Overview: Structure probing data (DMS and 2A3) for a 177-nucleotide construct. DMS adducts were read by reverse transcription with MarathonRT. Conditions: 150 mM KOAc, 10 mM MgCl2 and 150 mM bicine (pH 8.5), 24 C.

RNA sequence: GGGAACGACUCGAGUAGAGUCGAAAAGAAAAGUUGUCUAGUCGGUGACAACGAACGACGAAAAGCUAGCUAGGCCAUGCUAGCGAAGGCCGAAAAGCAUAUUACAGUAUGUGCGACUGGAAAGAAAGGGAUAGAUAAUCUUCGGAUUAUCUAUCCCAAAAGAAACAACAACAACAAC
Reactivity to DMS in 0.01 (KOAc 150mM, MgCl2 10mM, bicine 150mM(pH8.5), 24C), signal-to-noise 5, nucleotides 027 to 126: g020a100a060a110a110g000u010u000g000u010c020u020a070g020u000c050g010g000u020g030a080c110a030a080c070g030a080a120c100g030a040c080g020a070a070a090a180g000c000u000a010g010c010u000a100g000g000c140c110a080u020g020c000u000a020g010c020g000a080a050g000g010c030c020g010a050a100a090a110g030c020a030u000a020u020u080a120c230a150g030u010a060u010g030u000g020c020g000a020c040u000g000g000a070a090a060g000a100a100a100
Reactivity to 2A3 in 0.01 (KOAc 150mM, MgCl2 10mM, bicine 150mM(pH8.5), 24C), signal-to-noise 4, nucleotides 027 to 126: g090a000a080a000a020g000u020u040g000u020c040u060a070g110u130c050g060g110u060g030a020c000a030a000c050g040a040a000c060g230a010c070g010a040a040a000a020g020c000u000a000g000c000u040a020g020g020c000c060a050u130g000c000u000a000g000c000g010a000a010g060g040c010c030g020a110a050a030a030g010c000a000u060a060u050u190a110c070a070g110u120a040u030g030u020g030c030g030a040c020u070g040g070a030a060a000g120a020a120a110